Record summary:
This 177-nucleotide RNA was probed chemically with DMS and 2A3. The 2A3 profile rests on 1,602 reads.
RNA sequence: GGGAACGACUCGAGUAGAGUCGAAAAUGCACGGUGGCUUGAUUACACGCUCGCAUUCACGGUCACUUCCGAAGCGCUUUAGUACCUUCCGUCCCGAAACCGCCAACUGCCCGGGAGGCUUUAUACCACACUCCACCUACUUCGGUAGGUGGAGUGUAAAAGAAACAACAACAACAAC
Reactivity to DMS in 0.01 (KOAc 150mM, MgCl2 10mM, bicine 150mM(pH8.5), 24C), signal-to-noise 2, nucleotides 027 to 126: u040g030c000a080c080g060g010u000g000g000c030u000u080g000a020u000u000a080c080a150c020g000c120u000c020g000c060a110u000u010c110a040c060g000g000u000c000a110c080u010u010c100c010g040a060a050g000c060g050c080u000u100u000a140g020u070a110c010c060u000u010c000c070g000u000c020c020c020g010a040a010a080c060c040g010c000c080a070a060c120u010g010c030c010c050g030g010g000a210g000g030c080u040u000u040a050u000a150c150c080
Reactivity to 2A3 in 0.01 (KOAc 150mM, MgCl2 10mM, bicine 150mM(pH8.5), 24C), signal-to-noise 3, nucleotides 027 to 126: u070g030c030a020c050g060g030u080g020g040c050u080u150g060a110u170u220a050c040a010c110g020c010u040c040g080c060a130u080u050c030a020c030g050g020u010c020a000c010u090u020c040c010g030a050a020g010c000g050c040u130u050u050a080g000u070a070c000c000u020u060c030c010g040u070c000c050c000g000a020a020a000c050c040g000c000c070a010a060c060u020g000c000c000c000g020g020g000a020g010g000c000u050u020u060a090u040a010c020c100
2A3 adducts were read by reverse transcription with SuperScript II with manganese. It was measured as part of the RMDB library RFM100.